This 177-nucleotide RNA was probed chemically with DMS. The reactions ran in a buffer of 150 mM KOAc, 10 mM MgCl2 and 150 mM bicine (pH 8.5), at 24 C. The DMS profile rests on 1,129 reads. In probing experiments dimethyl sulfate is read out at A N1 and C N3, which are open when not base-paired.

[RMDB]
RNA sequence: GGGAACGACUCGAGUAGAGUCGAAAAAAAAGAUAUGGAUCGUAAGUUCGCUAUGAAGUGGGAAGGUGGUACCUCGGAAACGAGGUAUGUUACAGCCCAUGGAGCGAAUAUCGAUCCUAAGUCAAAAGUCCUAUGAUUGGUUCGCCAAUCAUAGGACAAAAGAAACAACAACAACAAC
Reactivity to DMS in 0.01 (KOAc 150mM, MgCl2 10mM, bicine 150mM(pH8.5), 24C), signal-to-noise 1, nucleotides 027 to 126: a070a020a110a100g020a000u000a000u000g000g010a000u040c010g030u020a080a250g030u000u000c010g030c000u000a300u010g000a150a220g000u010g000g010g010a000a030g010g050u010g000g000u000a000c000c000u020c000g000g000a010a000a030c000g000a000g000g020u010a010u000g020u010u000a010c010a250g000c000c010c000a010u000g010g010a010g000c000g010a010a030u000a050u000c010g010a000u000c000c000u000a000a050g000u000c000a140a100a140a180